[RMDB]
RNA sequence: GGGAACGACUCGAGUAGAGUCGAAAACGGUGUGCAGCUCAACCGGUUCUGCGCGUCCGGCCUGGAGGCCGUCAACACCGCCGCGCAGAAGGUGCGUUCGGGCUGGGAUGACCUGGUGCUGGCCGGCCGUAGAAGGUAUGUUCGCAUACCUUCUACGAAAAGAAACAACAACAACAAC
Reactivity to DMS in 0.01 (KOAc 150mM, MgCl2 10mM, bicine 150mM(pH8.5), 24C), signal-to-noise 7, nucleotides 027 to 126: c080g010g010u000g020u010g010c020a030g010c050u000c040a070a060c030c020g000g010u000u000c000u000g000c010g010c020g010u000c080c020g010g000c020c020u000g020g010a180g020g020c010c020g000u000c120a070a100c130a080c100c070g020c260c010g010c010g000c010a030g010a040a050g010g010u000g020c130g020u000u000c140g010g000g000c020u000g010g000g000a080u000g000a100c030c030u000g010g020u000g000c040u000g010g010c020c020g000g000c110
Reactivity to 2A3 in 0.01 (KOAc 150mM, MgCl2 10mM, bicine 150mM(pH8.5), 24C), signal-to-noise 6, nucleotides 027 to 126: c030g000g020u060g040u070g070c030a020g010c010u020c040a020a030c010c010g010g030u020u020c000u010g000c010g000c010g020u040c030c020g010g030c000c010u170g190g090a290g090g010c020c020g060u110c040a060a080c040a050c090c060g050c010c000g000c010g000c010a010g020a040a020g140g150u060g040c100g010u030u080c110g040g010g000c020u030g010g040g000a050u100g050a020c010c030u050g040g030u090g030c030u030g020g030c010c020g010g000c010

Structure probing data (DMS and 2A3) for a 177-nucleotide construct.
Reactivities are given for positions 27 through 126.
Source: RMDB library OK2TRN, as collected in RNAgym.
Conditions: 150 mM KOAc, 10 mM MgCl2 and 150 mM bicine (pH 8.5), 24 C.
2A3 adducts were read by reverse transcription with SuperScript II with manganese.
In probing experiments dimethyl sulfate is read out at A N1 and C N3, which are open when not base-paired.